[RMDB]
RNA sequence: GGGAACGACUCGAGUAGAGUCGAAAAUGCUGUACGGCCGGGUGCUCGUUACGUGGCGCGCACCCGUCUAAUCGGGAGAACCCAAUGGCGGCGGCCGAUAUGACCAAGUGCGCGUUAGCUUGCGAGAGCCUGCAAAUAGGUUCGCCUAUUUGCAGGCAAAAGAAACAACAACAACAAC
Reactivity to DMS in 0.01 (KOAc 150mM, MgCl2 10mM, bicine 150mM(pH8.5), 24C), signal-to-noise 2, nucleotides 027 to 126: u040g000c000u020g000u060a080c120g000g000c000c050g000g010g000u000g000c020u010c000g010u010u020a070c120g000u090g010g000c020g000c020g060c020a020c000c090c300g000u000c000u000a120a110u010c040g010g050g010a080g000a110a110c020c000c050a150a110u030g010g000c080g000g020c080g010g000c020c010g010a050u000a060u000g000a040c080c070a220a160g000u010g010c010g010c010g000u010u000a040g030c010u010u000g000c010g000a130g000a120
Reactivity to 2A3 in 0.01 (KOAc 150mM, MgCl2 10mM, bicine 150mM(pH8.5), 24C), signal-to-noise 4, nucleotides 027 to 126: u080g000c010u030g020u080a030c060g000g030c030c020g050g020g070u060g030c000u010c020g010u040u080a080c170g040u150g030g010c000g000c000g000c010a000c000c000c000g000u000c010u050a040a050u040c000g000g010g000a170g100a150a140c020c000c000a070a150u240g050g040c160g020g000c010g030g110c000c020g010a020u030a080u130g050a040c020c020a220a040g000u000g050c030g010c020g000u010u050a040g020c010u060u060g000c020g020a020g010a020
An RNA of 177 nucleotides, treated with DMS and 2A3 and read out base by base.
It was measured as part of the RMDB library OK1LIB.
Conditions: 150 mM KOAc, 10 mM MgCl2 and 150 mM bicine (pH 8.5), 24 C.
For DMS the reverse transcriptase was MarathonRT.
The DMS profile rests on 3,184 reads.